An RNA of 177 nucleotides, treated with 2A3 and DMS and read out base by base. Values are in units of 0.01, from 0 to 300, in steps of 10. The reactions ran in a buffer of 150 mM KOAc, 10 mM MgCl2 and 150 mM bicine (pH 8.5), at 24 C. Source: RMDB library OK1LIB, as collected in RNAgym. For DMS, 1,852 sequencing reads were counted.

[RMDB]
RNA sequence: GGGAACGACUCGAGUAGAGUCGAAAAUAAGCGCAAAAAAGCCGCUGGUGGUAGGCUGCCCCAACCACGGGCAAAUGAUCAACAGGACUCCACAACUGAUCAGCUGUCAAUCGCAGCAAAUCCGCAACAGCGGACUAAUGUUCGCAUUAGUCCGCUGAAAAGAAACAACAACAACAAC
Reactivity to 2A3 in 0.01 (KOAc 150mM, MgCl2 10mM, bicine 150mM(pH8.5), 24C), signal-to-noise 3, nucleotides 027 to 126: u160a050a010g040c020g000c070a070a160a070a020a070a070g030c010c030g040c070u050g020g070u030g010g030u040a060g030g030c030u040g010c010c000c000c020a040a040c010c030a040c070g030g000g010c010a040a040a040u120g000a030u060c040a030a110c040a080g080g000a050c030u040c070c040a110c030a090a170c040u030g000a060u060c030a040g020c000u000g060u110c030a090a100u140c130g010c030a020g010c020a050a010a000u060c010c020g000c050a070a090
Reactivity to DMS in 0.01 (KOAc 150mM, MgCl2 10mM, bicine 150mM(pH8.5), 24C), signal-to-noise 2, nucleotides 027 to 126: u000a030a090g000c020g000c040a000a060a160a130a080a130g000c090c000g000c080u050g000g020u030g000g040u020a040g000g000c050u000g000c060c000c010c040a110a120c210c170a080c180g000g090g000c040a030a060a030u010g000a040u000c000a080a020c070a060g040g000a100c090u000c070c010a050c150a070a110c060u050g080a020u000c080a010g000c090u020g000u040c070a070a140u000c080g000c080a090g000c040a020a010a070u030c110c070g010c100a220a210